[RMDB]
RNA sequence: GGGAACGACUCGAGUAGAGUCGAAAAGAUAUGGAGUCAACUGGGAGCUAAGACAUCGGAAACGAUGUCUAUAGCGAAGAACAGUGUGACUCCUAAGUCAAAACCAACUAAGUUCGCUUAGUUGGAACAGUCUUUGGAAGUUCGCUUCCAAAGACUGAAAAGAAACAACAACAACAAC
Reactivity to DMS in 0.01 (KOAc 150mM, MgCl2 10mM, bicine 150mM(pH8.5), 24C), signal-to-noise 2, nucleotides 027 to 126: g010a030u000a090u030g030g000a030g020u000c000a010a030c000u000g000g000g030a060g020c000u010a020a030g010a030c000a000u000c000g000g000a020a030a060c000g020a010u010g000u000c000u000a000u000a000g000c030g010a120a150g000a140a200c000a000g010u000g020u000g000a010c010u020c000c000u000a000a080g000u000c020a140a050a110a260c000c010a000a000c000u000a000a000g020u000u020c300g020c000u010u010a000g000u000u000g000g030a050a110
Reactivity to 2A3 in 0.01 (KOAc 150mM, MgCl2 10mM, bicine 150mM(pH8.5), 24C), signal-to-noise 1, nucleotides 027 to 126: g010a000u020a020u050g000g000a000g000u000c000a000a010c010u010g030g050g020a240g070c000u000a030a010g010a000c010a000u000c010g000g010a010a000a000c010g000a000u020g000u010c000u000a020u010a000g000c050g000a210a060g050a020a000c020a000g000u200g060u000g290a000c000u000c000c000u010a000a000g000u000c030a010a040a070a180c000c000a000a010c000u000a000a020g050u060u180c200g090c190u010u010a000g000u000u030g000g020a010a040

Background: Chemical mapping of a 177-nucleotide RNA with DMS and 2A3. For DMS, 2,275 sequencing reads were counted. Source: RMDB library TTRDES, as collected in RNAgym. The 2A3 profile rests on 3,488 reads. High 2A3 reactivity points to a flexible backbone, as in loops and unpaired stretches. The reactions ran in a buffer of 150 mM KOAc, 10 mM MgCl2 and 150 mM bicine (pH 8.5), at 24 C.